Chemical mapping of a 177-nucleotide RNA with DMS. The data come from the RNA Mapping Database (RMDB), library TTRDES. Reactivities are rounded to 0.1 and cut off at 0 and 3. For DMS, 719 sequencing reads were counted.
[RMDB]
RNA sequence: GGGAACGACUCGAGUAGAGUCGAAAAAAAAGAUAUGGAGCGUCUAACUAAGACAGGGAUCUCGAUUCCUGGCUCGGAAACGAGCCAGGACAGGAUUGAUCCUCGAGUUAGCGCUCCUAAGUCAAAAGAGGGAAGUAUAGUUCGCUAUACUUCCCUCAAAAGAAACAACAACAACAAC
Reactivity to DMS in 0.01 (KOAc 150mM, MgCl2 10mM, bicine 150mM(pH8.5), 24C), signal-to-noise 1, nucleotides 027 to 126: a090a090a180a070g000a000u040a300u000g000g000a000g000c000g020u000c010u000a020a000c000u040a090a090g020a190c300a150g000g080g000a000u000c000u000c010g000a300u020u000c000c000u000g000g000c000u000c050g010g000a000a080a130c000g030a000g020c000c000a020g000g020a000c300a030g000g000a150u000u000g020a090u000c020c000u000c050g000a050g030u010u000a000g000c000g000c000u000c000c010u000a010a090g000u030c020a020a170a130a050